Description: The data come from the RNA Mapping Database (RMDB), library OK3TST. Chemical mapping of a 207-nucleotide RNA with 2A3. The reactions ran in a buffer of 150 mM KOAc, 10 mM MgCl2 and 150 mM bicine (pH 8.5), at 24 C.
[RMDB]
RNA sequence: GGGAACGACUCGAGUAGAGUCGAAAAAAUAGACCAACUGCUAACAUGUUCACAAAAAUGAAACAGAUGCUAUGAUUUACCUCAUCUGCCAGGGUCCAUGUCCAUUAUCAUUACGCUAUGUGAUACUGUUAGGGUCUGACAUAGCAAGAGGGCAAUACCAUGGACUGAGUUUCGACUCAGUCCAUGGAAAAGAAACAACAACAACAAC
Reactivity to 2A3 in 0.01 (KOAc 150mM, MgCl2 10mM, bicine 150mM(pH8.5), 24C), signal-to-noise 2, nucleotides 027 to 156: a010a020u140a040g000a000c010c000a040a020c110u110g040c050u060a070a060c000a050u150g030u060u030c030a050c080a060a070a090a080a070u070g010a090a210a040c010a000g070a040u140g030c060u050a020u080g120a150u060u090u290a100c000c000u080c040a070u030c060u040g000c030c020a040g010g010g010u020c020c030a080u050g020u020c000c000a040u110u120a060u140c090a020u040u070a060c120g000c010u020a020u010g020u030g040a020u010a160c040u000g120u120u060a080g100g070g000u040c010u000g000a000c000a020u000a010g000c000a020a050g080a060g030g060g000c000a000a000u200a210